Chemical mapping of a 207-nucleotide RNA with 2A3 and DMS. Source: RMDB library OK3TST, as collected in RNAgym. The RNA was probed in 150 mM KOAc, 10 mM MgCl2 and 150 mM bicine (pH 8.5) at 24 C. Values cover nucleotides 27 to 156. For 2A3, 3,210 sequencing reads were counted. 2A3 adducts were read by reverse transcription with SuperScript II with manganese.
RNA sequence: GGGAACGACUCGAGUAGAGUCGAAAAGAGGCUAUAAGUCUGCCAAGAUUCGGGAGGUGGCACGGGUAUGUAUCGUGAACGAGAGUCCGAACCUUGCCUCAUGUGCUAUGGCACACGCACAAGAUACGUUCAUCGCAGAACGCGGCGAGGGGAUUGACAGUAAAUGGUUGUUCGCAACCAUUUACUGAAAAGAAACAACAACAACAAC
Reactivity to 2A3 in 0.01 (KOAc 150mM, MgCl2 10mM, bicine 150mM(pH8.5), 24C), signal-to-noise 4, nucleotides 027 to 156: g030a000g030g000c040u070a040u050a300a050g060u030c070u040g060c030c010a040a000g030a090u080u090c040g020g010g010a060g070g030u050g020g040c040a010c050g010g010g030u090a060u210g060u030a050u120c060g030u070g030a030a040c050g010a040g000a010g130u000c020c010g010a040a040c010c020u000u040g010c000c020u060c050a070u070g000u010g000c020u050a100u170g120g020c030a030c020a020c080g020c020a030c010a040a050g040a070u120a080c010g000u000u020c020a070u110c140g000c090a040g010a060a000c050g000c020g010g000c000g000a020g010g000g000g010a050u120u100g040a030
Reactivity to DMS in 0.01 (KOAc 150mM, MgCl2 10mM, bicine 150mM(pH8.5), 24C), signal-to-noise 2, nucleotides 027 to 156: g010a060g020g030c050u010a110u010a060a050g000u000c050u030g000c050c030a140a100g020a130u010u000c040g030g010g010a190g020g030u000g010g050c010a040c020g010g010g000u040a080u000g030u000a080u010c040g030u000g010a050a090c050g010a160g020a220g000u000c020c020g020a080a050c020c000u000u000g010c000c040u000c040a080u000g030u000g020c040u000a080u000g060g060c000a010c030a020c040g010c180a110c030a150a090g010a130u000a010c020g000u000u000c010a090u000c110g000c130a250g000a040a030c040g020c030g000g010c000g030a050g000g000g000g000a150u000u010g000a270